[RMDB]
RNA sequence: GGGAACGACUCGAGUAGAGUCGAAAACGUCGUGAACUAGCGACAAUGCAUUAGGUCCAUCGUUAUCUAACCGAAACAUCGUGACUAGUGCUAGAAUAGAACCACGAGAGGCCGCUGGCAAACAAAGACGGAUUGUAUUAUUCGUAGUACGGUCCGUAAAAGAAACAACAACAACAAC
Reactivity to DMS in 0.01 (KOAc 150mM, MgCl2 10mM, bicine 150mM(pH8.5), 24C), signal-to-noise 9, nucleotides 027 to 126: c130g010u000c020g000u000g000a130a140c080u020a080g010c040g010a100c100a100a070u030g000c020a030u010u000a050g010g000u010c020c020a130u010c130g010u000u000a100u000c030u010a090a110c240c140g010a050a050a060c040a070u010c140g000u030g000a090c010u010a020g010u000g000c010u010a070g000a090a090u020a060g000a090a110c070c020a030c020g000a050g000a120g000g020c010c020g000c060u010g010g010c050a070a070a070c110a050a080a090g010
Reactivity to 2A3 in 0.01 (KOAc 150mM, MgCl2 10mM, bicine 150mM(pH8.5), 24C), signal-to-noise 9, nucleotides 027 to 126: c040g020u010c000g010u020g050a100a040c040u010a040g010c000g030a010c000a020a040u070g000c000a010u000u040a030g030g070u000c010c000a020u020c050g010u010u030a140u050c030u020a030a070c040c020g010a010a010a010c030a030u070c060g060u090g030a020c010u010a010g010u000g010c000u010a020g040a040a020u070a020g020a020a010c010c000a020c020g020a030g010a020g050g010c000c000g000c030u020g010g000c010a030a030a010c020a010a090a010g100